Background: This 177-nucleotide RNA was probed chemically with 2A3 and DMS. The 2A3 profile rests on 1,123 reads.
[RMDB]
RNA sequence: GGGAACGACUCGAGUAGAGUCGAAAAACAAUUGGUAUGGUCCGCUUGAUGGUGACUUUGAACUGAUCUCUUGCAACCGUCGUGAGUUUUGUACGGACUUCGUUAAGACCAUGCUUGAGCAUGCUAAUGUUUGAGAGGGUUUCGACCCUCUCAAACAAAAAGAAACAACAACAACAAC
Reactivity to 2A3 in 0.01 (KOAc 150mM, MgCl2 10mM, bicine 150mM(pH8.5), 24C), signal-to-noise 2, nucleotides 027 to 126: a000c110a010a080u070u040g050g000u020a000u020g040g010u010c010c020g020c100u050u140g030a100u050g030g000u000g090a240c070u020u000u110g050a100a030c020u030g130a100u170c020u000c020u110u050g030c010a000a040c040c030g060u080c120g000u140g030a040g020u120u160u000u040g080u060a010c070g000g000a040c000u010u050c060g070u070u090a140a000g000a020c000c000a000u030g020c010u060u060g000a040g000c000a000u030g000c010u040a080a020
Reactivity to DMS in 0.01 (KOAc 150mM, MgCl2 10mM, bicine 150mM(pH8.5), 24C), signal-to-noise 2, nucleotides 027 to 126: a090c090a060a080u050u010g000g000u000a020u000g000g000u000c000c210g000c150u020u000g030a030u000g020g020u000g000a120c020u010u000u020g000a110a000c140u040g020a140u000c100u000c030u000u010g020c230a030a000c120c020g000u000c020g030u030g020a060g000u000u020u010u000g000u000a040c090g020g000a040c020u020u030c070g000u060u000a060a040g000a110c020c000a030u000g010c000u000u050g010a100g000c020a010u000g000c100u000a040a080
Reactivities are given for positions 27 through 126. The RNA was probed in 150 mM KOAc, 10 mM MgCl2 and 150 mM bicine (pH 8.5) at 24 C. 2A3 adducts were read by reverse transcription with SuperScript II with manganese.